[RMDB]
RNA sequence: GGGAACGACUCGAGUAGAGUCGAAAAUCAAGUAUCCUCUGGGGGUGUCCGUGUCCGUUCCGGGGGAAGAAGGGUGUUUUUGGACCAAACUCGUUGAAAACCAAUGCUUUUGCUGCCCUUGGAUUUCGGAAGAUAAAGUCUUCGGACUUUAUCUUCCAAAAGAAACAACAACAACAAC
Reactivity to DMS in 0.01 (KOAc 150mM, MgCl2 10mM, bicine 150mM(pH8.5), 24C), signal-to-noise 1, nucleotides 027 to 126: u010c080a120a170g040u000a110u000c020c000u000c020u000g000g030g030g030g060u000g000u000c090c090g020u000g020u000c060c050g020u000u010c010c000g030g010g010g000g000a060a070g000a090a080g000g010g020u000g000u000u010u030u010u010g000g010a090c100c070a050a110a100c050u010c100g000u000u010g000a080a040a170a100c070c050a010a060u000g010c020u000u000u010u010g000c080u000g000c000c010c040u010u000g000g000a160u000u000u000c110